[RMDB]
RNA sequence: GGGAACGACUCGAGUAGAGUCGAAAACAUACCCAGUACCUUUGGGAUAAUGUGGUUACUUCAUAUGCCUUCCCAUUUCACAGAUGAGGAGGCUGAAGCUCAGAAAUGGAACAGACUUACUGAAGGUUUCCUACCAUUUCAUGGUAGAGCAGAGACACUAAUAAUGGACGUUCGCGUCCAUUAUUAGAAAAGAAACAACAACAACAAC
Reactivity to 2A3 in 0.01 (KOAc 150mM, MgCl2 10mM, bicine 150mM(pH8.5), 24C), signal-to-noise 6, nucleotides 027 to 156: c020a020u110a140c000c000c010a010g050u080a070c010c030u070u070u060g040g000g020a070u180a170a120u160g040u050g050g050u080u120a060c010u020u020c020a040u070a070u300g000c010c010u050u170c040c010c010a010u080u210u150c130a110c040a040g030a020u020g020a060g050g010a010g000g000c000u010g010a010a000g010c010u020c070a070g070a130a100a090u150g050g020a080a020c040a050g070a050c030u100u100a020c020u150g040a050a030g000g000u020u050u050c000c000u000a010c010c000a060u110u190u300c110a040u080g000g000u020a010g010a010g030c040a010g010a020g000a030c010a000
Reactivity to DMS in 0.01 (KOAc 150mM, MgCl2 10mM, bicine 150mM(pH8.5), 24C), signal-to-noise 4, nucleotides 027 to 156: c050a120u010a220c010c000c010a160g010u000a040c050c030u000u000u000g000g020g000a110u000a040a100u000g010u010g010g000u000u000a040c040u000u000c030a120u000a070u000g010c000c000u000u000c000c010c000a050u000u000u000c270a210c280a250g000a050u000g030a040g030g020a020g020g050c010u000g010a010a060g020c010u000c050a160g000a070a090a070u000g020g020a130a090c060a060g010a080c080u010u010a300c050u000g010a070a040g010g000u000u000u000c030c010u000a050c000c000a080u000u010u010c120a060u000g020g020u000a030g010a100g030c070a060g000a180g000a100c040a100
The record gives the reactivity of an RNA of 207 nucleotides to 2A3 and DMS. The DMS profile rests on 9,154 reads. Values cover nucleotides 27 to 156.